Structure probing data (2A3) for a 207-nucleotide construct. The 2A3 profile rests on 702 reads. For 2A3 the reverse transcriptase was SuperScript II with manganese. Values cover nucleotides 27 to 156.

RNA sequence: GGGAACGACUCGAGUAGAGUCGAAAAGUACGAACGAACUCACGUUCACACGAGAGAUCGAGAGAGUGUGAGAGUUCGUGUUCGAUCGUGAGUGUUCGAGUUCACGAUCACUCGAACUCUCGAGAUCACACUCGUUCUCUCUCACGAUCGAUCACGAACCAAGGGAGAGCUUCGGCUCUCCCUUGGUAAAAGAAACAACAACAACAAC
Reactivity to 2A3 in 0.01 (KOAc 150mM, MgCl2 10mM, bicine 150mM(pH8.5), 24C), signal-to-noise 1, nucleotides 027 to 156: g090u050a010c070g010a010a000c030g070a040a010c060u060c120a160c060g010u040u000c010a010c000a040c100g000a000g010a000g000a000u000c090g000a000g000a010g010a080g000u030g000u070g030a010g000a000g000u000u000c000g000u000g000u000u120c070g000a000u000c000g010u000g060a050g020u100g050u130u160c110g050a020g000u000u000c010a020c040g000a000u010c030a000c010u000c000g000a000a040c000u000c000u000c050g010a000g000a020u080c000a000c000a000c000u020c000g020u030u000c000u000c000u000c000u000c010a010c020g090a140u150c050g020a000u080c090a040c220g100a010